[RMDB]
RNA sequence: GGGAACGACUCGAGUAGAGUCGAAAAGUCCUGCCAUGAGACCGCAACGAGAGCAUGUCGCAUCGAACGGACUCGGGGAGUCGGCAGCUUGCCCCACGGAUGAGCGCCUAAUGCCGGCAUUCGGGAAAAUAGACUGGAUAGUUCGCUAUCCAGUCAACAUUUUAAUCCCGUUCGCGGGAUUAAAAUGAAAAGAAACAACAACAACAAC
Reactivity to 2A3 in 0.01 (KOAc 150mM, MgCl2 10mM, bicine 150mM(pH8.5), 24C), signal-to-noise 2, nucleotides 027 to 156: g020u030c000c030u020g050c000c020a120u090g000a020g010a050c010c030g020c060a090a050c100g030a040g010a030g060c050a080u290g110u300c150g000c040a030u050c020g030a050a020c020g060g050a050c000u000c020g000g010g020g010a050g010u010c020g000g020c020a020g020c020u050u100g020c000c000c040c030a070c090g000g040a140u080g030a030g050c020g040c030c020u120a150a050u090g050c040c010g040g020c010a010u100u140c060g010g020g050a000a020a030a120u110a030g000a030c000u010g020g000a000u010a010g060u050u040c130g000c130u000a000u000c000c010a010g000u010c000a000a000
Reactivity to DMS in 0.01 (KOAc 150mM, MgCl2 10mM, bicine 150mM(pH8.5), 24C), signal-to-noise 1, nucleotides 027 to 156: g010u000c020c030u000g000c060c030a030u000g020a040g020a050c020c040g070c050a140a130c030g010a150g020a120g010c070a180u020g050u020c050g030c070a100u010c030g020a150a100c030g010g000a140c000u000c010g000g020g030g050a170g020u000c030g040g020c040a120g000c060u000u000g000c020c010c000c100a290c060g000g000a120u020g010a030g000c090g010c030c050u000a020a130u010g040c010c050g030g030c020a120u000u010c040g060g030g020a090a070a090a220u010a130g000a040c000u010g000g000a000u000a010g010u000u000c280g030c000u000a000u000c000c000a050g000u000c020a010a050